Chemical mapping of a 177-nucleotide RNA with 2A3 and DMS. For DMS the reverse transcriptase was MarathonRT. The RNA was probed in 150 mM KOAc, 10 mM MgCl2 and 150 mM bicine (pH 8.5) at 24 C.
RNA sequence: GGGAACGACUCGAGUAGAGUCGAAAAAUUUACUCAUAAACCUAGAAUACGUGAAUUCGGGGAUUUCUCUCGAUAAUUUCAGUCCCUAGUGUCGCUAGUAAUUAUAAAGCGAAGUCUUAUCAGACUAUCAUACCGACAGAUUCGUCUGUCGGUAUGAAAAAGAAACAACAACAACAAC
Reactivity to 2A3 in 0.01 (KOAc 150mM, MgCl2 10mM, bicine 150mM(pH8.5), 24C), signal-to-noise 5, nucleotides 027 to 126: a000u130u100u040a090c060u060c090a090u110a090a100a030c000c000u030a040g060a050a060u130a110c080g060u080g070a070a020u040u010c020g000g010g010g010a030u020u220u020c080u030c020u000c050g040a030u020a150a110u070u120u130c030a020g060u040c020c020c000u010a010g040u040g020u150c000g010c020u010a030g100u060a110a070u170u130a160u160a180a090a010g040c040g010a030a000g000u000c010u040u070a180u180c060a030g000a030c000u020a020
Reactivity to DMS in 0.01 (KOAc 150mM, MgCl2 10mM, bicine 150mM(pH8.5), 24C), signal-to-noise 4, nucleotides 027 to 126: a040u010u010u010a010c030u000c040a120u030a040a160a110c060c050u000a090g010a080a080u030a090c160g010u010g000a070a070u010u000c020g000g010g000g010a130u000u010u020c050u000c030u020c060g000a040u020a050a070u010u000u000c050a140g010u000c190c040c010u000a080g020u020g020u000c030g020c060u000a100g010u020a060a090u010u010a100u020a080a090a040g020c050g000a030a030g020u010c010u000u010a090u030c150a070g000a020c020u010a150